Background: Chemical mapping of a 177-nucleotide RNA with DMS and 2A3. The 2A3 profile rests on 13,253 reads. The reactions ran in a buffer of 150 mM KOAc, 10 mM MgCl2 and 150 mM bicine (pH 8.5), at 24 C.
[RMDB]
RNA sequence: GGGAACGACUCGAGUAGAGUCGAAAAGAUAUGGAUCGAGUAUGCAAUGAUGUGUGGACUUACUCGGAAACGAGGGGUCCACAUUGAGCAUACCGAUCCUAAGUCAAAAUCGGGCUUCGGCCCGAAACUACAGCUUAUUGUUCGCAAUAAGCUGUAGAAAAGAAACAACAACAACAAC
Reactivity to DMS in 0.01 (KOAc 150mM, MgCl2 10mM, bicine 150mM(pH8.5), 24C), signal-to-noise 5, nucleotides 027 to 126: g000a030u000a300u000g000g010a010u000c010g010a150g010u000a000u000g010c000a250a130u020g010a090u000g000u000g020u000g000g010a020c000u000u000a130c010u000c000g000g010a070a070a170c010g000a010g010g000g010g000u000c000c000a000c000a000u000u000g000a110g020c010a010u000a000c000c000g000a000u000c000c000u000a010a090g000u000c030a090a050a070a140u000c020g010g000g010c000u000u010c220g030g010c000c000c000g010a000a010a120
Reactivity to 2A3 in 0.01 (KOAc 150mM, MgCl2 10mM, bicine 150mM(pH8.5), 24C), signal-to-noise 6, nucleotides 027 to 126: g020a010u070a020u140g000g000a000u000c010g020a110g120u010a000u010g010c030a200a300u130g030a040u110g090u010g000u010g020g000a000c010u020u220a300c000u120c000g010g030a070a070a020c010g000a010g000g020g000g010u000c000c000a000c010a000u000u000g000a000g000c000a000u000a010c000c000g000a000u000c000c000u000a020a000g020u000c010a000a000a020a300u050c010g000g000g010c000u080u100c260g130g000c000c000c000g010a010a000a000